[RMDB]
RNA sequence: GGGAACGACUCGAGUAGAGUCGAAAAUGGUAGAAUCAUGGGGUUAUGAUGAACUUCUUCAUCAUAUCAGAAAAUUCUAUGCAUGGGUAUUGGACCAAGCCCCAUACAAUGAAUUAGCACGAAGUGGCUUUCCGGCACAGUUCGCUGUGCCGGAAAGAAAAGAAACAACAACAACAAC
Reactivity to 2A3 in 0.01 (KOAc 150mM, MgCl2 10mM, bicine 150mM(pH8.5), 24C), signal-to-noise 1, nucleotides 027 to 126: u100g010g010u010a040g010a030a000u220c070a010u110g000g000g000g070u020u140a000u030g000a000u000g000a120a050c070u130u140c070u040u000c110a000u000c000a000u000a000u010c000a030g270a010a140a000a000u000u000c000u000a060u030g140c020a060u110g000g000g000u070a120u090u130g090g020a000c000c010a000a010g000c050c000c000c000a110u190a010c060a140a040u120g060a080a060u190u020a030g030c010a010c200g190a160a020g100u050g120g010
Reactivity to DMS in 0.01 (KOAc 150mM, MgCl2 10mM, bicine 150mM(pH8.5), 24C), signal-to-noise 1, nucleotides 027 to 126: u010g000g080u000a010g000a050a040u030c000a040u040g010g030g080g000u050u010a030u020g000a040u000g000a000a090c300u120u040c170u000u010c000a000u000c010a000u000a040u000c000a060g000a040a190a060a020u000u000c000u000a130u000g030c050a060u010g000g000g000u010a120u040u020g020g010a110c100c000a040a200g020c080c000c060c180a020u040a140c200a010a190u060g000a000a050u000u000a070g020c040a160c130g010a060a110g000u000g040g040